This 177-nucleotide RNA was probed chemically with 2A3 and DMS.
The RNA was probed in 150 mM KOAc, 10 mM MgCl2 and 150 mM bicine (pH 8.5) at 24 C.
2A3 adducts were read by reverse transcription with SuperScript II with manganese.
For 2A3, 2,065 sequencing reads were counted.
DMS adducts were read by reverse transcription with MarathonRT.
RNA sequence: GGGAACGACUCGAGUAGAGUCGAAAAGAAAGAGGAUCGAUGAUGACUUCCACAUAUACAUUCCUUGGAAAGCUGAACAAAAUGAGUGAAAACUCUAUACCGUCAUCCUCGUCGAACUGAGGUCCAACUUCGUCCAUAUCUUCGGAUAUGGACGAAGAAAAGAAACAACAACAACAAC
Reactivity to 2A3 in 0.01 (KOAc 150mM, MgCl2 10mM, bicine 150mM(pH8.5), 24C), signal-to-noise 3, nucleotides 027 to 126: g020a020a040a010g000a010g070g010a030u040c110g010a030u090g050a040u120g050a100c020u020u000c020c000a060c010a060u300a000u070a050c080a040u010u110c010c000u020u050g000g040a000a150a010g040c070u150g030a110a090c120a120a090a080a120u200g000a010g060u100g070a080a010a000a010c020u040c020u020a020u050a060c050c000g010u000c010a020u000c000c010u000c020g060u030c000g050a030a080c030u130g050a010g040g090u000c030c010a000a030
Reactivity to DMS in 0.01 (KOAc 150mM, MgCl2 10mM, bicine 150mM(pH8.5), 24C), signal-to-noise 2, nucleotides 027 to 126: g000a050a110a100g000a040g000g000a000u000c140g000a030u010g000a090u000g000a030c000u000u000c000c010a010c170a130u020a110u020a150c150a150u000u000c020c010u000u000g010g000a040a010a030g040c070u030g000a060a120c190a010a020a090a070u010g000a030g000u000g020a120a090a070a030c020u000c000u010a170u000a040c130c060g010u000c000a040u000c000c000u000c060g020u000c160g000a060a030c120u010g000a140g050g010u010c010c020a060a130